Chemical mapping of a 207-nucleotide RNA with 2A3 and DMS. 2A3 adducts were read by reverse transcription with SuperScript II with manganese. For 2A3, 1,871 sequencing reads were counted. The DMS profile rests on 2,226 reads. It was measured as part of the RMDB library OK3TST. The RNA was probed in 150 mM KOAc, 10 mM MgCl2 and 150 mM bicine (pH 8.5) at 24 C.
RNA sequence: GGGAACGACUCGAGUAGAGUCGAAAACGAGGGAAAGACCGUCUCUCAGACUUGCCUUUAGUAUUUUGCCAUAUUAAGACUACGAAUCUGUUAGUGUCAGUUACGUGUACUGCGCGAUCACUGUUUAGAUAUGAUUGAUCUAACUUACCUGAAUAAGCAAGUCCAAGUGUUUCGACACUUGGACUUGAAAAGAAACAACAACAACAAC
Reactivity to 2A3 in 0.01 (KOAc 150mM, MgCl2 10mM, bicine 150mM(pH8.5), 24C), signal-to-noise 4, nucleotides 027 to 156: c050g000a030g030g000g020a020a040a050g120a070c090c050g050u010c000u000c000u010c030a010g050a040c040u050u080g040c000c000u070u020u090a040g050u040a150u010u090u070u100g060c010c010a040u040a070u070u110a080a030g030a040c030u040a020c120g140a100a070u030c050u080g050u080u100a070g020u020g050u100c020a020g020u010u060a020c040g020u030g060u070a090c040u130g030c030g000c020g060a100u050c000a030c050u010g070u080u070u080a000g030a010u040a030u090g190a130u070u090g010a030u010c020u010a010a070c000u040u080a030c000c030u070g040a100a040u110a100a000g010
Reactivity to DMS in 0.01 (KOAc 150mM, MgCl2 10mM, bicine 150mM(pH8.5), 24C), signal-to-noise 1, nucleotides 027 to 156: c030g020a160g030g000g000a070a100a090g030a100c100c020g000u030c030u000c020u000c020a150g020a050c020u000u000g020c010c050u030u000u030a070g050u020a070u000u010u000u000g040c220c160a120u000a060u000u000a080a060g030a050c040u000a170c060g050a040a070u010c000u000g000u000u000a080g010u000g030u000c000a120g000u000u000a080c060g060u000g000u000a080c000u020g000c070g050c020g030a090u000c040a080c080u010g000u000u000u000a000g010a030u000a030u000g000a180u000u000g020a130u040c000u020a000a080c060u000u000a000c040c000u000g010a080a090u010a070a200g000